[RMDB]
RNA sequence: GGGAACGACUCGAGUAGAGUCGAAAAAAUGACCUCAGCCUGCCACUGAGGGCUAACUGUGGCGUGAGUGUUGGCUCCAGGAGGUGCCAGUGGGAGGGCACUGGAGAGGGUGGGGCUUGGACAUGGGAUCCUAUUAACAGUUCGCUGUUAAUAGGAUAAAAGAAACAACAACAACAAC
Reactivity to DMS in 0.01 (KOAc 150mM, MgCl2 10mM, bicine 150mM(pH8.5), 24C), signal-to-noise 5, nucleotides 027 to 126: a060a060u010g010a090c010c000u000c020a050g020c050c020u000g010c050c050a280c010u000g000a090g010g010g000c040u010a060a090c070u010g010u000g010g020c090g020u010g000a100g020u000g010u000u000g000g000c010u000c030c020a090g010g010a130g010g020u000g010c020c020a040g010u000g000g010g010a150g010g010g000c060a060c080u010g010g000a160g020a120g000g000g000u010g000g000g000g020c140u000u010g010g010a060c100a070u010g010g010g000
Reactivity to 2A3 in 0.01 (KOAc 150mM, MgCl2 10mM, bicine 150mM(pH8.5), 24C), signal-to-noise 4, nucleotides 027 to 126: a010a020u110g040a040c000c000u020c000a030g080c010c020u080g030c020c010a020c020u030g010a110g040g040g000c010u020a050a030c020u060g040u080g170g010c070g070u140g060a060g030u200g040u060u100g040g030c000u000c020c010a070g010g140a090g000g070u020g030c030c000a010g010u090g030g040g030a130g000g000g010c070a040c070u060g020g030a110g040a040g060g040g060u190g010g020g000g010c010u070u090g050g000a030c030a070u050g010g070g020
Source information:
The record gives the reactivity of an RNA of 177 nucleotides to DMS and 2A3. The RNA was probed in 150 mM KOAc, 10 mM MgCl2 and 150 mM bicine (pH 8.5) at 24 C. Values cover nucleotides 27 to 126.